[RMDB]
RNA sequence: GGGAACGACUCGAGUAGAGUCGAAAAGCCGUCGAGAUGCUGGGGAAGCACUGCAUGGUGGGUAUGUAGUCGACCGUGUGGAUCUCGCCGAACAGCCGCAUGCCCUCCUCGAUGAGGAAGUUGAAGACCUAAUCGCAUCAUUCGUGAUGCGAUUAGGAAAAGAAACAACAACAACAAC
Reactivity to DMS in 0.01 (KOAc 150mM, MgCl2 10mM, bicine 150mM(pH8.5), 24C), signal-to-noise 3, nucleotides 027 to 126: g000c040c020g030u020c040g000a050g000a050u000g000c050u000g010g030g010g010a130a140g010c090a110c040u000g000c040a030u000g020g020u000g010g020g010u000a080u000g020u010a050g030u010c030g010a130c050c020g020u020g040u000g020g010a070u000c060u010c050g000c030c020g040a090a130c120a070g000c030c060g020c090a070u010g000c000c010c020u000c030c030u000c020g010a130u010g010a050g000g000a040a080g000u010u010g000a190a130g010a220
Reactivity to 2A3 in 0.01 (KOAc 150mM, MgCl2 10mM, bicine 150mM(pH8.5), 24C), signal-to-noise 2, nucleotides 027 to 126: g020c000c010g050u020c030g030a010g000a050u120g100c010u040g010g020g030g090a050a020g020c050a020c010u020g000c020a060u060g030g090u100g140g020g000u100a050u120g080u030a030g010u020c010g030a020c030c060g210u120g040u040g070g030a000u060c060u020c040g000c020c000g050a080a050c030a030g010c010c000g000c050a030u170g010c000c000c010u000c010c000u010c030g270a290u240g020a010g080g000a050a110g060u150u190g070a090a000g020a040